This 207-nucleotide RNA was probed chemically with DMS and 2A3. Values cover nucleotides 27 to 156. Source: RMDB library M2RFPK, as collected in RNAgym.
RNA sequence: GGGAACGACUCGAGUAGAGUCGAAAAGAAAUUCCCGAUCGGCGGUAAAGUCCGCGAGCCGAACGAAAAAGGUUGGGCAGGAACCGGUGAGAUUCCGGUACCGACAGUAUAGUCUGGAUGGAAGAAGGUAGCCUCCUCUCGUUCGCGAGAGGAGGAAGUAACAACUUUACUUCGGUAAAGUUGUUACAAAAGAAACAACAACAACAAC
Reactivity to DMS in 0.01 (KOAc 150mM, MgCl2 10mM, bicine 150mM(pH8.5), 24C), signal-to-noise 2, nucleotides 027 to 156: g030a090a150a180u010u000c000c020c000g000a100u000c040g010g020c000g020g010u000a100a140a110g000u000c000c010g010c030g000a230g010c010c000g010a030a300c040g040a050a090a180a190a100g010g000u000u010g000g030g000c030a140g010g020a050a030c000c040g050g000u020g010a300g000a300u000u000c000c010g040g010u000a000c000c010g040a050c100a120g030u000a110u000a120g020u000c050u000g030g000a090u000g010g010a070a050g000a080a130g020g000u000a190g000c030c000u000c000c010u000c000u000c000g020u000u010c290g000c000g000a010g000a020g000g000a000g030g000a000a000
Reactivity to 2A3 in 0.01 (KOAc 150mM, MgCl2 10mM, bicine 150mM(pH8.5), 24C), signal-to-noise 1, nucleotides 027 to 156: g000a010a080a000u040u000c000c000c020g000a140u060c000g000g000c010g000g000u020a020a010a000g000u020c020c020g040c010g000a010g030c000c010g130a000a010c010g080a170a230a000a000a080g190g040u070u030g000g000g050c000a000g000g000a000a000c000c000g000g000u030g000a030g000a000u010u010c000c000g010g000u000a000c000c000g000a000c000a010g020u020a050u100a140g140u050c130u060g130g000a100u110g010g090a060a060g030a060a060g110g010u080a080g070c000c000u000c000c010u020c000u000c000g030u080u040c180g000c020g050a000g010a010g000g050a000g000g000a000a000